Structure probing data (DMS and 2A3) for a 207-nucleotide construct. Source: RMDB library M2RFOK, as collected in RNAgym.
[RMDB]
RNA sequence: GGGAACGACUCGAGUAGAGUCGAAAACAAGUUCGUGCUUGCGACUUACACGUAGGGCGAGGGGUGUGCGAAAGUUGCCAUGAGACCGUAACUUUCGUAGUCAUUGAUAAAGGGGCAGGUCUCGCUCAAAACCUCCCGUGGUUCGCCACGGGAGGAACUAUCAAUGGACGUUCGCGUCCAUUGAUAGAAAAGAAACAACAACAACAAC
Reactivity to DMS in 0.01 (KOAc 150mM, MgCl2 10mM, bicine 150mM(pH8.5), 24C), signal-to-noise 1, nucleotides 027 to 156: c040a070a110g040u010u000c150g030u010g020c020u000u000g000c020g000a120c070u000u000a060c040a090c050g010u010a080g080g000g000c070g030a050g020g010g030g000u000g000u000g090c010g000a050a010a050g000u010u010g000c000c020a110u000g020a060g010a080c030c030g000u000a040a050c000u000u010u010c020g010u000a080g000u030c130a150u000u000g000a240u000a070a060a060g010g020g000g030c150a110g030g020u000c000u000c000g080c170u000c050a060a040a050a100c000c000u000c000c010c010g030u000g020g020u000u000c200g030c010c000a030c000g040g020g010a000g000g020a000a000
Reactivity to 2A3 in 0.01 (KOAc 150mM, MgCl2 10mM, bicine 150mM(pH8.5), 24C), signal-to-noise 4, nucleotides 027 to 156: c040a010a030g020u110u110c030g030u090g080c090u090u130g020c030g070a040c080u100u110a030c080a010c090g090u100a100g010g010g030c070g060a050g000g020g000g010u090g030u020g000c010g000a000a010a000g000u000u000g000c030c070a100u160g070a000g010a060c010c010g010u000a000a000c000u000u000u010c020g000u010a030g020u050c050a040u030u170g070a060u110a150a080a030g000g010g010g010c040a020g010g020u010c010u000c010g000c020u070c020a040a110a050a060c010c000u000c000c000c000g000u000g000g000u020u040c170g030c050c000a000c000g000g000g000a000g000g000a000a000

Description: The reactions ran in a buffer of 150 mM KOAc, 10 mM MgCl2 and 150 mM bicine (pH 8.5), at 24 C.